The record gives the reactivity of an RNA of 177 nucleotides to DMS and 2A3. Reactivities are given for positions 27 through 126. The 2A3 profile rests on 2,656 reads. It was measured as part of the RMDB library OK1LIB. The reactions ran in a buffer of 150 mM KOAc, 10 mM MgCl2 and 150 mM bicine (pH 8.5), at 24 C.
[RMDB]
RNA sequence: GGGAACGACUCGAGUAGAGUCGAAAAUGGCUGCAUUUGCGAUAUGACGAGUAAAUAAAACGACACAUUUUUCCAAUUCCUGCGCUCUGAAGGAUGGAGGGCGGAUGAAGAGUGGGCGUGGGAGAGGGCAUAAUCGUGGUUUCGACCACGAUUAUGCAAAAGAAACAACAACAACAAC
Reactivity to DMS in 0.01 (KOAc 150mM, MgCl2 10mM, bicine 150mM(pH8.5), 24C), signal-to-noise 2, nucleotides 027 to 126: u010g020g020c020u010g060c010a050u020u010u040g000c100g020a110u030a070u050g010a100c090g030a070g010u010a040a060a060u080a030a080a060a070c170g010a100c110a060c090a090u020u030u000u020u000c040c010a100a090u010u000c000c020u000g000c030g000c000u000c040u010g000a110a150g000g040a110u000g000g010a050g000g000g020c060g070g000a060u030g010a090a090g000a070g000u000g030g000g030c080g010u010g000g010g000a110g020a110g000g020
Reactivity to 2A3 in 0.01 (KOAc 150mM, MgCl2 10mM, bicine 150mM(pH8.5), 24C), signal-to-noise 4, nucleotides 027 to 126: u130g030g000c010u030g000c040a030u010u050u030g040c040g050a040u050a070u070g110a060c060g020a030g070u080a010a060a050u200a050a110a030a020c080g160a020c010a010c050a130u140u090u010u020u000c060c000a060a080u050u010c000c000u040g000c010g010c010u020c030u060g080a060a030g040g070a060u200g050g040a060g030g010g050c090g010g000a060u120g020a040a040g060a030g080u080g040g020g000c010g000u010g000g030g020a040g020a040g030g020